[RMDB]
RNA sequence: GGGAACGACUCGAGUAGAGUCGAAAAAGCCGGAUUACGAUCCGGCAGGAGCAGCGAAGAAUUAGUUGCGAAACUGAUUGACUGACGGCGGGAGAGAUCCCGCCGUUACGCCUCGUACGCGAGGCGAAAGAUAUUGCAAGUUCGCUUGCAAUAUCUUAAAAGAAACAACAACAACAAC
Reactivity to 2A3 in 0.01 (KOAc 150mM, MgCl2 10mM, bicine 150mM(pH8.5), 24C), signal-to-noise 8, nucleotides 027 to 126: a000g000c010c010g010g000a010u040u060a080c180g040a010u000c000c000g010g000c000a000g010g010a090g020c030a010g010c030g060a140a030g070a160a250u120u070a070g020u020u020g030c030g030a050a030a010c050u050g030a130u140u100g090a100c090u050g000a000c010g000g000c000g000g000g000a050g010a000g010a040u010c000c000c010g000c000c000g000u000u000a000c000g000c000c000u000c000g010u010a010c230g000c010g070a000g010g000c000g000a010
Reactivity to DMS in 0.01 (KOAc 150mM, MgCl2 10mM, bicine 150mM(pH8.5), 24C), signal-to-noise 8, nucleotides 027 to 126: a090g010c000c000g010g000a010u010u010a110c170g010a090u000c000c000g010g010c000a010g010g000a140g000c070a050g000c070g020a150a100g010a070a050u010u010a050g010u000u000g020c220g000a110a040a040c050u010g000a040u010u000g010a140c150u010g010a010c000g010g000c000g000g000g010a020g000a180g000a150u000c010c000c000g010c000c000g010u000u000a000c030g010c000c000u000c010g020u020a120c170g020c020g010a010g000g000c010g010a020

Record summary:
Chemical mapping of a 177-nucleotide RNA with 2A3 and DMS. In probing experiments dimethyl sulfate is read out at A N1 and C N3, which are open when not base-paired. The reactions ran in a buffer of 150 mM KOAc, 10 mM MgCl2 and 150 mM bicine (pH 8.5), at 24 C.